[RMDB]
RNA sequence: GGGAACGACUCGAGUAGAGUCGAAAAGACGUCUUUAGAAGAAGAGGCUAGGGGGUAUUCCGGUGUGGGAUACUUAGUAAUAUGCAACGCUAAUUGCAUAAGAUUGUAGGACGGAAUUUACAGUCUUUAGAGAUAAGCACGUUCGCGUGCUUAUCAACUGGCUAGAUUACUUCGGUAAUCUAGCCAGAAAAGAAACAACAACAACAAC
Reactivity to 2A3 in 0.01 (KOAc 150mM, MgCl2 10mM, bicine 150mM(pH8.5), 24C), signal-to-noise 1, nucleotides 027 to 156: g030a030c040g070u000c030u000u130u120a090g000a100a000g020a000a000g000a070g010g000c010u010a020g020g100g000g000g000u040a050u040u060c100c090g100g020u110g040u090g060g020g000a010u000a010c000u030u120a030g020u070a040a060u040a030u090g040c000a040a000c030g000c160u150a090a080u010u020g010c010a000u010a050a010g070a020u030u030g030u030a040g030g000a000c060g050g010a040a040u110u090u020a050c050a000g000u020c000u060u130u080a130g000a000g000a040u000a000a000g020c000a000c010g010u040u080c190g030c000g080u000g000c010u020u000a000u000c000a000a000

The record gives the reactivity of an RNA of 207 nucleotides to 2A3. The RNA was probed in 150 mM KOAc, 10 mM MgCl2 and 150 mM bicine (pH 8.5) at 24 C. For 2A3 the reverse transcriptase was SuperScript II with manganese. Values cover nucleotides 27 to 156. For 2A3, 636 sequencing reads were counted.